[RMDB]
RNA sequence: GGGAACGACUCGAGUAGAGUCGAAAAGAUCCGGUGGAUGGCAGCGUGAGCGCCAACCAGGGCAUCCGCUUCCUCUUCUCCGACGGCUCACGCGUCAUCUUCCGCCUCUCCGGCACUGGCUCAUCGGAGGAACCUACAAUUUCGAUUGUAGGUUCCUAAAAGAAACAACAACAACAAC
Reactivity to DMS in 0.01 (KOAc 150mM, MgCl2 10mM, bicine 150mM(pH8.5), 24C), signal-to-noise 2, nucleotides 027 to 126: g000a090u000c120c000g000g000u000g000g020a040u020g010g030c000a120g060c020g010u000g000a050g000c030g040c100c050a090a070c130c070a080g000g020g020c070a080u000c070c050g010c070u000u010c030c020u000c090u000u000c040u000c060c080g020a100c080g010g000c000u000c000a020c020g020c000g000u000c010a030u000c020u000u020c020c000g010c040c000u010c010u000c050c020g000g020c010a050c070u010g020g020c020u000c050a070u000c060g010g010
Reactivity to 2A3 in 0.01 (KOAc 150mM, MgCl2 10mM, bicine 150mM(pH8.5), 24C), signal-to-noise 1, nucleotides 027 to 126: g010a060u080c050c020g010g020u010g000g030a010u000g020g010c110a130g010c130g000u010g020a010g000c050g000c020c040a000a020c090c050a050g010g060g020c000a080u040c020c000g040c030u080u060c000c010u000c040u100u040c040u060c020c040g160a150c020g050g000c010u000c000a010c010g000c000g000u010c010a000u000c010u020u000c000c030g000c010c000u000c000u000c020c010g040g000c020a050c070u080g040g000c000u010c110a050u070c090g070g010

This 177-nucleotide RNA was probed chemically with DMS and 2A3. Reactivities are rounded to 0.1 and cut off at 0 and 3. Values cover nucleotides 27 to 126. The reactions ran in a buffer of 150 mM KOAc, 10 mM MgCl2 and 150 mM bicine (pH 8.5), at 24 C.